Conditions: 150 mM KOAc, 10 mM MgCl2 and 150 mM bicine (pH 8.5), 24 C. The record gives the reactivity of an RNA of 177 nucleotides to 2A3 and DMS. For 2A3 the reverse transcriptase was SuperScript II with manganese. High 2A3 reactivity points to a flexible backbone, as in loops and unpaired stretches. The DMS profile rests on 1,168 reads.
RNA sequence: GGGAACGACUCGAGUAGAGUCGAAAAGGUUGCUAUCGACCAGGCCGAAGUCCCACAUGUCGGUAACAUACGCGCUGUCAAGGGACACCUCGGUUACUUGUGGAACUCCUCGUGUUUGACUAAGCGCGUGGUCAAUAACCUUCGGGUUAUUGACCACAAAAGAAACAACAACAACAAC
Reactivity to 2A3 in 0.01 (KOAc 150mM, MgCl2 10mM, bicine 150mM(pH8.5), 24C), signal-to-noise 3, nucleotides 027 to 126: g040g000u040u020g020c020u000a000u060c020g010a000c020c020a080g020g000c030c000g000a080a020g130u030c010c040c000a010c030a040u090g000u030c000g010g020u020a100a000c070a080u240a040c030g020c000g000c030u020g020u030c020a030a050g060g020g000a050c010a110c060c000u040c050g100g000u140u090a100c050u100u100g020u050g110g000a060a050c020u030c070c000u020c090g090u070g110u040u080u020g000a090c040u100a150a000g030c000g000c010
Reactivity to DMS in 0.01 (KOAc 150mM, MgCl2 10mM, bicine 150mM(pH8.5), 24C), signal-to-noise 1, nucleotides 027 to 126: g080g030u000u000g050c180u000a090u020c020g000a030c030c010a100g010g020c010c020g020a090a120g000u000c000c020c030a120c100a170u020g000u010c000g000g030u010a070a090c280a090u020a090c100g080c000g000c000u000g010u000c010a130a020g050g000g000a000c220a180c000c000u060c070g000g000u020u030a020c090u040u040g000u000g000g000a050a050c200u000c030c070u000c230g030u000g040u010u000u030g010a040c040u020a150a030g000c040g020c000